An RNA of 177 nucleotides, treated with DMS and 2A3 and read out base by base. For DMS, 3,354 sequencing reads were counted. 2A3 adducts were read by reverse transcription with SuperScript II with manganese.
[RMDB]
RNA sequence: GGGAACGACUCGAGUAGAGUCGAAAACAAGAAAGGCGCCACAGCAGAAGCGUUCACGUGGCUGCGCCUGUCAGAUUCUGGUGAAUCUGCGAAUUCUGCUGUAGAAAAGACACGAAAGACGUGAUAACCAGUGGGUGAUAUUCGUAUCACCCACUGGAAAAGAAACAACAACAACAAC
Reactivity to DMS in 0.01 (KOAc 150mM, MgCl2 10mM, bicine 150mM(pH8.5), 24C), signal-to-noise 2, nucleotides 027 to 126: c060a180a130g000a060a080a010g040g010c010g040c030c240a040c010a010g020c020a090g000a010a110g050c070g010u040u010c060a050c010g040u000g000g000c000u000g000c000g030c010c010u000g000u030c000a000g020a000u000u000c000u010g060g000u040g040a050a000u000c030u000g000c030g030a040a030u000u000c000u000g020c090u000g050u030a090g020a170a050a030a060g010a100c060a070c060g000a140a180a040g000a020c030g040u000g000a060u020a100a240
Reactivity to 2A3 in 0.01 (KOAc 150mM, MgCl2 10mM, bicine 150mM(pH8.5), 24C), signal-to-noise 4, nucleotides 027 to 126: c020a030a000g120a160a090a000g020g000c000g000c010c010a050c000a000g000c010a000g010a030a000g030c020g090u040u030c030a010c050g020u010g030g000c020u030g000c010g000c000c000u030g000u020c000a010g000a010u000u000c030u290g280g050u300g090a000a000u000c020u020g010c020g010a000a020u030u060c000u000g000c000u000g050u060a020g100a010a080a010a000g080a010c040a000c170g130a080a090a010g150a030c020g020u050g010a060u050a060a040